[RMDB]
RNA sequence: GGGAACGACUCGAGUAGAGUCGAAAACAUGCCCAUGAUUGCCAGCCCGGUCGGCAGAAUGGGUAAGUAGUCCGCUUGCCGCGCGACACCAAAGGCGAAGGUGCCCAACCCCGCAGCGAUCAGCAUGGGUACCGACUUAAUUCGUUAAGUCGGUACCAAAAGAAACAACAACAACAAC
Reactivity to DMS in 0.01 (KOAc 150mM, MgCl2 10mM, bicine 150mM(pH8.5), 24C), signal-to-noise 3, nucleotides 027 to 126: c060a080u000g020c010c000c000a080u000g000a250u000u000g000c020c000a160g000c030c040c040g000g020u000c100g000g020c010a040g000a250a030u000g000g010g020u000a010a050g040u010a160g010u000c040c040g020c020u000u000g030c050c060g020c090g030c100g030a080c030a050c020c050a030a080a120g010g000c050g000a100a120g000g020u000g010c030c000c060a090a140c060c020c020c030g000c150a070g030c020g000a040u000c050a110g020c090a090u010g010
Reactivity to 2A3 in 0.01 (KOAc 150mM, MgCl2 10mM, bicine 150mM(pH8.5), 24C), signal-to-noise 2, nucleotides 027 to 126: c010a020u110g000c000c010c010a010u040g110a180u080u130g000c000c000a010g030c030c000c070g160g070u150c060g000g040c000a030g050a040a020u030g020g000g000u010a050a020g000u020a010g010u020c020c020g020c070u060u130g040c050c000g000c010g000c050g030a020c000a050c010c010a080a060a050g070g010c040g060a100a020g000g050u060g020c020c010c030a000a080c010c000c010c010g040c040a040g000c010g030a080u110c000a010g060c050a080u160g070